RNA sequence: GGGAACGACUCGAGUAGAGUCGAAAAAUGCAUUCAUUAAAACGAUAACAAAUGCAUGUGUUAUCCCAGCGAUGAUUGAGUUUGCAAUUUUAAUUAAAUUCCUGGCAUUCAAGCGGCUGGCACAAUGCGAGUCGUGGCUCUUCGGAGCCACGACUCGAAAAGAAACAACAACAACAAC
Reactivity to 2A3 in 0.01 (KOAc 150mM, MgCl2 10mM, bicine 150mM(pH8.5), 24C), signal-to-noise 1, nucleotides 027 to 126: a020u000g000c000a000u000u110c000a000u090u090a040a300a100a100c070g010a020u040a070a000c070a000a060a000u020g040c000a000u000g000u000g030u070u130a060u000c000c000c150a000g010c000g020a000u130g060a070u110u100g000a130g000u090u140u210g150c020a130a000u020u000u100u120a030a300u040u130a100a000a000u000u000c000c000u000g110g020c010a000u020u020c000a130a040g000c000g010g050c070u000g150g000c000a000c040a020a160u070g000